[RMDB]
RNA sequence: GGGAACGACUCGAGUAGAGUCGAAAAGCAGGGGCUGAGCACCGGCGAGGCCCCGUUGAGGUGGUAGGCCCCGUUAUAGAGCAGGUCCCCGUACGAAAAUCGCUGCGACGCCCACGGGUUGGCCGUGGAAUGCACUGCUAUUCGUAGCAGUGCAUUCAAAAGAAACAACAACAACAAC
Reactivity to 2A3 in 0.01 (KOAc 150mM, MgCl2 10mM, bicine 150mM(pH8.5), 24C), signal-to-noise 4, nucleotides 027 to 126: g100c110a060g000g010g010g000c010u020g020a040g070c030a070c110c070g100g000c010g010a060g030g040c000c030c010c000g000u000u040g000a020g010g040u070g040g030u040a050g050g000c000c000c000c000g020u050u030a170u110a150g110a030g050c040a030g000g070u080c000c000c000c010g020u040a050c060g040a080a060a010a070u100c050g000c040u030g020c010g020a030c050g040c000c030c010a010c000g000g020g000u080u130g120g000c000c000g000u010g030
Reactivity to DMS in 0.01 (KOAc 150mM, MgCl2 10mM, bicine 150mM(pH8.5), 24C), signal-to-noise 6, nucleotides 027 to 126: g030c090a190g010g000g020g010c000u000g000a300g000c020a180c110c110g000g020c020g010a280g000g000c020c010c020c010g000u010u010g010a150g010g000u000g000g000u010a240g000g000c020c000c000c010g020u010u020a090u010a100g000a110g010c030a080g000g000u000c020c010c000c050g000u020a070c110g000a060a060a080a100u030c070g000c020u000g000c000g010a060c110g010c060c020c000a040c020g000g000g010u000u010g000g000c010c010g000u010g010